RNA sequence: GGGAACGACUCGAGUAGAGUCGAAAAGAGGAGAUGCCAGUGGAGCUUGGCUUGCUCCUUCUGUGGCCAGCUGGCUUGUUUUACCACUGCCUUUGGGGUACAGUGGCAGCUGUGGCAAAUCUCUCUGGAGUUUCUCUAGCGGGAGCGAAGCACCUAAGCUAUGGAACAAUUUCGAUUGUUCCAUAGCAAAAGAAACAACAACAACAAC
Reactivity to 2A3 in 0.01 (KOAc 150mM, MgCl2 10mM, bicine 150mM(pH8.5), 24C), signal-to-noise 4, nucleotides 027 to 156: g060a030g010g010a010g000a020u040g020c020c020a020g040u100g110g060a080g040c060u090u070g020g020c010u000u060g060c030u060c040c000u080u050c040u040g080u070g080g020c030c020a020g010c030u040g030g000c000u050u110g100u130u150u030u130a040c010c000a000c030u020g020c010c010u100u110u220g110g040g000g000u140a130c040a050g000u020g020g000c010a010g000c010u040g010u080g090g000c010a040a100a140u020c050u000c000u000c020u030g080g010a040g040u040u160u060c040u040c000u010a020g030c020g030g000g010a040g010c050g030a040a010g050c030a060c040c020u030a080a010
Reactivity to DMS in 0.01 (KOAc 150mM, MgCl2 10mM, bicine 150mM(pH8.5), 24C), signal-to-noise 1, nucleotides 027 to 156: g010a080g060g000a040g000a140u000g030c000c030a070g020u000g040g010a100g050c010u000u000g010g010c020u000u000g000c020u010c020c050u000u000c040u010g020u010g010g020c030c020a150g020c060u010g030g010c030u040u000g020u010u010u000u000a080c040c010a030c000u010g000c010c030u010u010u010g030g030g000g030u000a090c030a020g020u010g020g030c030a040g030c060u000g020u010g000g030c060a050a060a100u000c010u000c010u010c010u000g020g020a140g020u000u000u000c020u010c020u010a140g000c040g000g000g020a070g040c050g020a070a160g020c020a120c030c010u010a080a300